The data come from the RNA Mapping Database (RMDB), library TTRDES. The record gives the reactivity of an RNA of 177 nucleotides to DMS and 2A3. 2A3 adducts were read by reverse transcription with SuperScript II with manganese. For 2A3, 31,400 sequencing reads were counted. For DMS, 13,653 sequencing reads were counted. The reactions ran in a buffer of 150 mM KOAc, 10 mM MgCl2 and 150 mM bicine (pH 8.5), at 24 C.
[RMDB]
RNA sequence: GGGAACGACUCGAGUAGAGUCGAAAAGAUAUGGAGAUGAAGUAGCUAGCUGCUCACUCGGAAACGAGUGACAGCUUGGACCUACUAUCUCCUAAGUCAAAGACCAUUACGUUCGCGUAAUGGUCAAGUUAAUCUCAAUCUUCGGAUUGAGAUUAACAAAAGAAACAACAACAACAAC
Reactivity to DMS in 0.01 (KOAc 150mM, MgCl2 10mM, bicine 150mM(pH8.5), 24C), signal-to-noise 8, nucleotides 027 to 126: g010a050u000a300u000g010g000a010g010a020u000g010a160a060g010u000a000g000c040u000a020g010c000u000g010c300u000c000a000c000u000c000g000g000a110a110a240c000g010a020g010u000g000a020c000a000g000c000u000u000g020g000a090c300c010u000a000c010u000a140u000c000u000c000c000u000a040a100g000u000c030a130a140a150g010a010c000c000a010u000u000a010c000g010u010u010c300g020c010g020u000a000a000u000g010g000u000c000a000a030
Reactivity to 2A3 in 0.01 (KOAc 150mM, MgCl2 10mM, bicine 150mM(pH8.5), 24C), signal-to-noise 6, nucleotides 027 to 126: g030a010u070a050u170g030g010a020g010a020u100g180a300a080g020u010a000g030c050u020a010g000c000u020g010c070u010c000a010c000u000c010g010g020a090a090a030c010g000a000g000u000g000a000c010a000g000c000u010u050g010g030a010c010c010u000a010c000u000a010u000c010u000c000c000u020a140a050g050u010c060a140a050a050g000a010c000c000a000u000u010a010c020g020u020u100c300g000c010g160u000a000a000u010g040g000u000c000a000a000